Source information: Structure probing data (2A3) for a 207-nucleotide construct. Source: RMDB library OK3TST, as collected in RNAgym.
RNA sequence: GGGAACGACUCGAGUAGAGUCGAAAACAGUUGCUGCCCCUCCAAACUCAUCAGUCACUGGCAAACAGGAGGAAUGUGUGGCUCAUGUCUGGGCAUCAGUGGCUGUGGGAGACAUCCUUGAUCUUCUCCAGCUUCUCCUUCCACAUUUUCCUUUGCAUCUUUACCCGCAUUUCGAUGCGGGUAAAGAAAAAGAAACAACAACAACAAC
Reactivity to 2A3 in 0.01 (KOAc 150mM, MgCl2 10mM, bicine 150mM(pH8.5), 24C), signal-to-noise 1, nucleotides 027 to 156: c050a010g030u040u050g040c080u070g000c000c000c000c010u000c010c050a030a060a030c100u160c110a210u070c030a050g020u020c000a010c030u000g000g020c040a090a060a110c010a140g030g010a000g000g040a050a000u050g060u020g070u060g130g020c010u040c110a090u060g110u270c170u120g040g010g070c120a200u190c020a050g000u030g030g000c010u010g020u100g000g020g000a000g000a010c000a070u100c040c030u210u240g160a280u100c000u090u000c030u040c000c020a000g000c020u050u030c010u060c000c000u080u100c000c010a020c000a000u000u000u040u080c040c030u070u000u140g000c000a000